[RMDB]
RNA sequence: GGGAACGACUCGAGUAGAGUCGAAAACAUAUAUCAAAUGCAAUAAUGAUUUUGGAAUUCCAAGUACCUGUACUCAAUAUAACGAAACAGCCAUUGUGGGACAAAAUGUUACAUUAGGUAUAUGUAUCGAAAAAUAUAAUCCCGUAUCAUGGCAUCGCCAGGCGACGAUAUUCGUAUCGUCGCCUGGAAAAGAAACAACAACAACAAC
Reactivity to 2A3 in 0.01 (KOAc 150mM, MgCl2 10mM, bicine 150mM(pH8.5), 24C), signal-to-noise 1, nucleotides 027 to 156: c000a000u050a000u060a010u030c010a010a000a030u010g010c020a030a050u100a030a060u110g170a080u260u010u000u130g090g100a240a120u270u040c040c000a020a010g040u020a060c000c020u060g030u050a060c000u030c110a080a140u280a020u160a270a040c020g060a080a070a070c000a020g000c070c040a060u040u180g090u110g040g000g020a010c010a000a000a000a000u050g020u000u000a010c000a000u000u140a030g020g000u000a000u000a020u040g000u000a080u110c020g050a020a000a000a260a000u270a020u030a130a070u090c020c020c000g000u090a160u110c030a110u080g000g040c110a100u040c000g000

This 207-nucleotide RNA was probed chemically with 2A3. The data come from the RNA Mapping Database (RMDB), library OK3TST. The 2A3 profile rests on 402 reads. The reactions ran in a buffer of 150 mM KOAc, 10 mM MgCl2 and 150 mM bicine (pH 8.5), at 24 C.